The record gives the reactivity of an RNA of 207 nucleotides to DMS and 2A3. The 2A3 profile rests on 10,473 reads. For DMS the reverse transcriptase was MarathonRT. The reactions ran in a buffer of 150 mM KOAc, 10 mM MgCl2 and 150 mM bicine (pH 8.5), at 24 C. Source: RMDB library ARCHII, as collected in RNAgym. For DMS, 11,811 sequencing reads were counted.
[RMDB]
RNA sequence: GGGAACGACUCGAGUAGAGUCGAAAAGGGAUGUCCCUGCCCCGGAUGCUGGCAUCGACUAAGGGACUUGCUAUCCAACCGCGUCAGCGGGGUUGGAUGGGACUUCUACCGCUGACUGGGCCCAUCAUCCGGAUGUGUUCGUCCUAGCCGGAGGGCCGAACUAGUUACAGUUCGCUGUAACUAGUUCAAAAGAAACAACAACAACAAC
Reactivity to DMS in 0.01 (KOAc 150mM, MgCl2 10mM, bicine 150mM(pH8.5), 24C), signal-to-noise 3, nucleotides 027 to 156: g010g010g010a110u000g000u010c010c010c020u000g010c010c010c010c020g000g010a040u000g020c050u010g050g030c030a060u000c030g020a090c060u000a150a080g010g020g020a050c020u000u000g020c000u000a070u000c010c010a030a020c000c010g010c000g020u000c050a050g020c010g010g020g020g020u000u000g000g000a040u000g000g000g000a110c030u010u000c150u000a140c080c010g010c010u010g000a050c020u020g030g030g010c010c010c020a190u000c110a270u000c030c020g050g000a100u010g020u000g010u000u000c090g000u010c050c040u010a220g000c000c020g000g000a140g000g010g020c030c030
Reactivity to 2A3 in 0.01 (KOAc 150mM, MgCl2 10mM, bicine 150mM(pH8.5), 24C), signal-to-noise 1, nucleotides 027 to 156: g010g000g010a030u100g000u000c010c000c000u020g030c000c000c000c020g150g010a020u060g020c180u200g160g090c030a030u030c040g060a050c050u100a040a050g000g000g010a000c000u030u300g000c000u000a000u010c000c000a000a000c000c000g000c000g000u000c000a000g000c000g000g000g000g000u000u000g000g000a000u000g000g000g000a010c010u230u060c060u220a260c020c010g000c000u000g000a000c000u000g010g010g000c000c020c000a080u170c030a060u020c050c000g000g000a040u070g150u040g040u160u160c140g080u180c020c020u050a090g020c010c000g000g000a020g000g000g000c000c000